[RMDB]
RNA sequence: GGGAACGACUCGAGUAGAGUCGAAAAGAGUCAAUUGAGUUCUAAUCAGAGGAGAGAGACCUUUUUUGCCCUCAUGAAAGAGGUUCUGGAUGUAACAGGGGGAGUGAUAGACCGUGUGGAUCUAGUGUAAUAAGACCCUGUUCGCAGGGUCUUAUUAAAAAGAAACAACAACAACAAC
Reactivity to DMS in 0.01 (KOAc 150mM, MgCl2 10mM, bicine 150mM(pH8.5), 24C), signal-to-noise 8, nucleotides 027 to 126: g000a110g010u000c030a060a150u010u020g010a300g010u010u000c040u010a110a110u020c130a080g000a050g000g000a190g000a040g000a220g000a020c020c010u000u000u010u000u030u010g010c050c020c020u000c140a080u030g010a030a070a080g000a050g010g020u010u010c030u000g010g000a060u010g010u010a050a080c120a060g010g000g000g000g000a060g010u020g000a100u020a050g000a060c050c040g010u010g020u010g000g010a060u000c020u000a040g020u010g030
Reactivity to 2A3 in 0.01 (KOAc 150mM, MgCl2 10mM, bicine 150mM(pH8.5), 24C), signal-to-noise 2, nucleotides 027 to 126: g110a010g030u080c050a090a110u120u090g040a020g070u070u000c040u110a090a090u140c090a000g030a030g040g040a000g000a000g010a010g040a080c040c000u080u000u000u000u010u230g100c000c010c000u030c100a140u210g140a070a040a090g080a050g020g020u050u040c040u010g110g050a080u080g000u140a030a060c010a020g000g000g000g000g000a010g020u090g050a040u030a100g000a000c010c030g090u090g020u040g100g010a010u000c020u050a130g060u020g060